[RMDB]
RNA sequence: GGGAACGACUCGAGUAGAGUCGAAAAGAUAUGGAGCGCCAUGUAAGGAGCCGUCGGAAACGACGGAACUACUCUUGAGUGGAACUACGCUCCUAAGUCAAAACGAGCGGACUUCGGUCCGCUCGAACACAUAUAUCCGCUUCGGCGGAUAUAUGUGAAAAGAAACAACAACAACAAC
Reactivity to DMS in 0.01 (KOAc 150mM, MgCl2 10mM, bicine 150mM(pH8.5), 24C), signal-to-noise 3, nucleotides 027 to 126: g010a020u010a230u000g000g000a000g020c010g010c030c010a000u000g000u020a200a080g030g010a000g000c010c000g020u000c000g010g000a060a060a070c010g020a030c020g000g020a020a020c040u030a300c010u000c010u000u010g000a300g010u030g000g000a140a070c180u020a270c030g020c010u000c000c000u000a010a060g000u000c040a080a020a160a230c030g010a020g050c010g000g000a000c000u000u000c300g020g000u000c010c000g010c000u000c000g000a030a120
Reactivity to 2A3 in 0.01 (KOAc 150mM, MgCl2 10mM, bicine 150mM(pH8.5), 24C), signal-to-noise 2, nucleotides 027 to 126: g020a020u040a010u140g050g000a050g020c040g000c020c060a040u070g170u300a190a170g040g000a000g020c000c000g030u000c000g000g000a010a040a030c000g010a010c020g000g040a000a030c030u240a040c010u000c040u140u190g220a020g080u050g000g030a030a080c090u170a090c210g020c020u010c000c000u000a000a010g010u010c010a030a000a110a230c020g010a010g010c030g000g030a010c000u050u140c300g060g000u000c040c000g000c010u010c010g000a000a010